[RMDB]
RNA sequence: GGGAACGACUCGAGUAGAGUCGAAAAUGGUAGAAUGGCUGACCACAGCAAUGACCAGCCCUCAUUAGGGCCCUGGAUGAUUUUUGGUCUAAUAACGCAUGCUAGUGUUGAUGUUUUUUGGUCAAGAGGGUAUGAACAGGAAGAAUUAAAUGCAGCAGGAGUAAUAUAUGUUCGCAUAUAUUACUCCAAAAGAAACAACAACAACAAC
Reactivity to DMS in 0.01 (KOAc 150mM, MgCl2 10mM, bicine 150mM(pH8.5), 24C), signal-to-noise 3, nucleotides 027 to 156: u010g010g000u000a030g010a080a060u010g000g030c010u010g010a100c030c020a110c110a090g000c070a090a150u000g010a100c020c030a110g010c050c060c020u000c160a140u010u000a090g020g010g030c030c040c060u000g000g010a140u010g000a140u000u000u020u010u000g010g010u010c000u010a060a090u010a050a060c080g030c080a080u010g000c030u000a090g000u010g010u010u000g000a100u010g020u000u000u000u010u000u000g000g020u000c040a050a100g020a080g000g020g000u000a060u000g010a030a090c010a050g000g010a060a080g000a060a140u010u000a020a050a050u000g030c050a060g050c090a150
Reactivity to 2A3 in 0.01 (KOAc 150mM, MgCl2 10mM, bicine 150mM(pH8.5), 24C), signal-to-noise 6, nucleotides 027 to 156: u090g010g000u030a030g030a140a060u070g040g000c040u010g020a040c010c020a050c050a050g050c030a020a120u110g040a050c010c010a010g040c030c090c020u030c060a150u110u300a040g000g000g000c000c040c070u090g040g020a070u090g030a070u060u080u110u140u130g020g000u010c010u020a050a090u050a130a030c050g010c070a030u090g020c040u070a040g030u030g020u100u040g030a080u030g060u030u040u000u020u070u120g020g000u040c020a030a030g050a040g060g010g010u080a070u140g050a060a010c030a030g010g040a020a030g010a020a010u130u100a060a060a070u120g020c030a020g070c010a030
The data come from the RNA Mapping Database (RMDB), library OK3TST. The record gives the reactivity of an RNA of 207 nucleotides to DMS and 2A3. The DMS profile rests on 6,454 reads.